RNA sequence: GGGAACGACUCGAGUAGAGUCGAAAAGCGUACUACGCAUACUACCCACCGUCAACACACCCUUGGACCAGCUCCCAAAUAGGAGCUGCUAGGGUGUCUAGACGAGGUAUGCGUAUCGCAAAACCCCAUUCCUAGGCUUCGGCCUAGGAAUGGGGAAGUACACAUAACGGUUCGCCGUUAUGUGUACAAAAGAAACAACAACAACAAC
Reactivity to 2A3 in 0.01 (KOAc 150mM, MgCl2 10mM, bicine 150mM(pH8.5), 24C), signal-to-noise 4, nucleotides 027 to 156: g020c020g060u130a100c050u010a000c030g010c000a000u010a010c010u080a070c020c060c050a050c060c010g000u000c020a070a020c000a000c000a000c020c000c040u070u130g080g060a190c110c020a000g000c000u050c000c020c030a230a300a080u280a160g000g000a000g010c000u000g000c000u010a000g000g000g000u000g000u000c000u020a000g000a000c000g000a010g000g000u000a000u000g010c010g000u020a050u300c050g000c030a010a030a130a200c000c000c000c000a000u000u000c000c000u010a010g010g030c000u070u060c280g120g000c010c000u000a000g000g000a000a000u000g000g000g000g000a000a000
Reactivity to DMS in 0.01 (KOAc 150mM, MgCl2 10mM, bicine 150mM(pH8.5), 24C), signal-to-noise 1, nucleotides 027 to 156: g000c040g070u010a080c140u000a040c000g000c000a000u000a030c050u000a050c040c000c000a300c160c010g000u000c000a060a210c300a020c010a010c010c000c010u000u010g100g070a150c270c020a030g010c010u010c010c000c000a070a110a270u000a110g010g000a060g040c020u010g040c030u010a060g000g060g020u000g010u000c000u000a300g000a040c010g000a040g030g010u000a010u020g010c000g010u000a000u000c000g040c010a020a020a110a080c000c010c010c000a040u000u000c000c010u000a000g000g010c020u000u000c300g000g000c020c000u010a000g000g000a020a010u000g020g030g000g000a010a000
Chemical mapping of a 207-nucleotide RNA with 2A3 and DMS. The RNA was probed in 150 mM KOAc, 10 mM MgCl2 and 150 mM bicine (pH 8.5) at 24 C. For DMS the reverse transcriptase was MarathonRT. The data come from the RNA Mapping Database (RMDB), library RNAMAK. The DMS profile rests on 2,003 reads.